[RMDB]
RNA sequence: GGGAACGACUCGAGUAGAGUCGAAAAGAUUAAGUGGGAGCGUCGCCCUGUCGGUGCAUCGGAUAUUAAUUAGCCAGUGCGUGGCAUUACGCAUAUUGAUGUCUACUUUGGCGUAGACUUUGCCAAUUUAAGGAUUGGUGGGCAAUCCAGCCCUAGAGAGCAUUUUACCUUUCGAGGUAAAAUGCUCAAAAGAAACAACAACAACAAC
Reactivity to 2A3 in 0.01 (KOAc 150mM, MgCl2 10mM, bicine 150mM(pH8.5), 24C), signal-to-noise 1, nucleotides 027 to 156: g120a070u080u090a140a120g080u050g030g150g010a100g060c010g010u020c010g030c000c040c040u080g100u140c020g100g000u050g080c000a070u050c060g060g010a030u070a010u000u220a140a060u130u090a060g010c000c070a100g030u000g010c010g030u000g040g000c160a030u180u170a030c000g000c000a000u000a120u130u250g130a080u070g030u060c020u000a000c010u050u120u160g110g050c060g000u020a000g000a030c000u040u020u060g000c000c000a020a030u020u070u020a200a020g050g000a020u000u020g020g020u090g090g000g000c030a010a070u050c030c080a060g000c000c010c050u070a120g020a000
This 207-nucleotide RNA was probed chemically with 2A3. For 2A3, 457 sequencing reads were counted. 2A3 adducts were read by reverse transcription with SuperScript II with manganese. The RNA was probed in 150 mM KOAc, 10 mM MgCl2 and 150 mM bicine (pH 8.5) at 24 C.